[RMDB]
RNA sequence: GGGAACGACUCGAGUAGAGUCGAAAAUGCGAUUCGUCGCAAGGUUCGCGUACUACAGGUAGAUCAGAUAGAAGCACAACAGCCUCGCUCCCAAAUAGGAGCGAGGACAUGUGCCUAUCUUCCCUACCUGUAUCGCAGUCAUGCCAUUCGUGGCAAAGCGUACCCUCAAAUUCGUUUGAGGGUACGCAAAAGAAACAACAACAACAAC
Reactivity to 2A3 in 0.01 (KOAc 150mM, MgCl2 10mM, bicine 150mM(pH8.5), 24C), signal-to-noise 2, nucleotides 027 to 156: u110g000c000g030a030u050u120c290g070u030c000g170c010a040a020g130g080u100u160c100g000c040g000u080a090c040u000a000c020a020g010g000u000a000g020a070u120c050a000g010a000u000a000g070a220a060g020c000a000c000a000a160c080a050g050c010c000u000c000g010c000u020c000c000c040a160a300a050u300a040g000g010a000g010c000g000a000g000g010a020c000a050u010g010u020g010c020c000u000a000u000c000u020u000c040c000c000u000a000c000c000u000g000u000a030u010c000g000c000a000g050u050c040a040u140g000c010c000a050u080u130c300g150u120g010g000c000a000a050a000